Annotation
The data come from the RNA Mapping Database (RMDB), library RNAMAK. Chemical mapping of a 207-nucleotide RNA with 2A3 and DMS. 2A3 adducts were read by reverse transcription with SuperScript II with manganese. The DMS profile rests on 2,498 reads.
RNA sequence: GGGAACGACUCGAGUAGAGUCGAAAAGGGGUCCACUUCUGUGAUGAUGGGACAUGGCUCGGGUACUGAAGCCUCCACGGUAUCUCUAGCGUGGCCAACAGCCCAUUGCAUGGAGUGGACGGAGGCACCCAAACUCGUGGCCUUCGGGCCACGAGAACGUAUGGAAAUACUUCGGUAUUUCCAUACGAAAAGAAACAACAACAACAAC
Reactivity to 2A3 in 0.01 (KOAc 150mM, MgCl2 10mM, bicine 150mM(pH8.5), 24C), signal-to-noise 4, nucleotides 027 to 156: g080g010g040g000u030c000c000a000c000u070u050c020u060g060u030g090a170u070g020a040u060g050g030g040a050c120a170u180g030g000c010u010c070g010g010g000u010a000c000u010g030a080a020g010c010c000u010c010c000a010c000g010g000u010a010u010c060u000c080u210a090g160c070g140u300g030g020c000c030a090a050c050a110g030c030c010c000a030u050u140g020c020a040u260g010g010a000g010u000g010g000a000c000g000g000a000g010g000c020a040c000c010c010a040a070a070c010u010c000g000u000g000g020c030c000u060u060c210g050g000g010c000c000a000c010g000a000g000a000a020
Reactivity to DMS in 0.01 (KOAc 150mM, MgCl2 10mM, bicine 150mM(pH8.5), 24C), signal-to-noise 2, nucleotides 027 to 156: g000g000g000g000u000c000c010a010c000u020u000c020u000g000u010g010a150u020g000a130u000g000g060g010a110c060a300u000g030g000c050u000c100g010g000g030u000a050c020u000g000a090a180g100c010c010u000c050c010a300c030g030g030u000a030u000c020u000c050u010a190g020c240g030u000g070g020c030c020a060a090c120a160g070c070c000c000a060u000u000g000c050a090u010g000g000a120g040u000g000g000a020c000g030g010a010g000g090c020a100c020c010c000a060a080a060c000u000c020g090u000g010g010c010c000u010u000c300g020g000g070c010c010a000c040g000a020g030a030a100